[RMDB]
RNA sequence: GGGAACGACUCGAGUAGAGUCGAAAAUCCUAAGUCUCUCGAGGGAUUCGAUGGUAGUAAGGCAACAGCUCGGAAACGAGACAUGCCUUACGAGAGUAGAAUCCCAGUGAAAGAGAGAUAUGGAAAAGAACAGCAAAAGUUCGCUUUUGCUGUUCAACUCAUCUUGACAGUUCGCUGUCAAGAUGAGAAAAGAAACAACAACAACAAC
Reactivity to 2A3 in 0.01 (KOAc 150mM, MgCl2 10mM, bicine 150mM(pH8.5), 24C), signal-to-noise 2, nucleotides 027 to 156: u000c000c000u010a110a030g020u000c010u030c010u000c020g050a080g010g010g000a000u000u020c010g020a020u030g020g020u000a020g020u000a000a010g020g010c020a080a040c030a240g030c010u000c010g050g010a080a120a070c020g010a000g060a010c030a070u040g000c000c010u000u000a000c010g000a000g000a000g000u010a010g000a000a000u000c000c000c020a000g000u000g080a060a030a000g000a000g000a000g000a000u020a020u050g010g030a040a050a200a240g000a000a010c000a000g000c000a000a000a010a010g000u050u170c220g140c040u000u030u000u000g010c000u000g000u000u000c000a000a010
Reactivity to DMS in 0.01 (KOAc 150mM, MgCl2 10mM, bicine 150mM(pH8.5), 24C), signal-to-noise 1, nucleotides 027 to 156: u010c000c000u020a120a190g010u000c000u000c020u000c010g000a160g050g010g010a050u000u010c000g000a190u030g010g000u000a230g000u000a000a020g010g030c020a050a060c040a170g040c030u000c030g020g000a100a160a300c020g000a060g030a000c080a300u000g000c000c010u000u000a000c000g000a300g000a100g020u000a300g000a060a020u020c010c000c010a030g030u000g040a200a220a050g000a080g020a050g000a020u000a060u000g000g000a030a070a100a110g000a020a000c010a020g010c000a020a000a010a020g000u000u040c300g040c000u010u000u000u000g000c000u000g000u000u000c000a020a130
Conditions: 150 mM KOAc, 10 mM MgCl2 and 150 mM bicine (pH 8.5), 24 C. Structure probing data (2A3 and DMS) for a 207-nucleotide construct. It was measured as part of the RMDB library RNAMAK. For DMS the reverse transcriptase was MarathonRT. For DMS, 2,005 sequencing reads were counted.